Structure probing data (DMS) for a 177-nucleotide construct. It was measured as part of the RMDB library OK2TST. The RNA was probed in 150 mM KOAc, 10 mM MgCl2 and 150 mM bicine (pH 8.5) at 24 C. The DMS profile rests on 923 reads.
[RMDB]
RNA sequence: GGGAACGACUCGAGUAGAGUCGAAAAGAAGUGAAAAUGGGUUGCUGUCCCAUGCAAAGACCCUGGAAAGCUGUUAACAGCUCAGCUUGUCACUUUCACCAUCUGCAUUUGUCCAGAGUGAUUGAGACCGCCUUCAACUAUUCGUAGUUGAAGGCGGAAAAGAAACAACAACAACAAC
Reactivity to DMS in 0.01 (KOAc 150mM, MgCl2 10mM, bicine 150mM(pH8.5), 24C), signal-to-noise 1, nucleotides 027 to 126: g000a100a040g050u010g000a040a040a140a070u000g050g010g000u000u000g020c090u000g000u000c060c090c000a050u000g000c030a090a120a230g010a060c010c000c000u000g010g020a140a050a040g010c000u000g030u000u010a130a130c100a110g010c160u010c010a030g010c020u000u010g020u000c000a050c020u000u020u010c050a220c030c100a060u000c040u000g000c070a130u010u010u000g000u000c140c030a010g000a070g030u010g020a090u010u000g000a140g000a180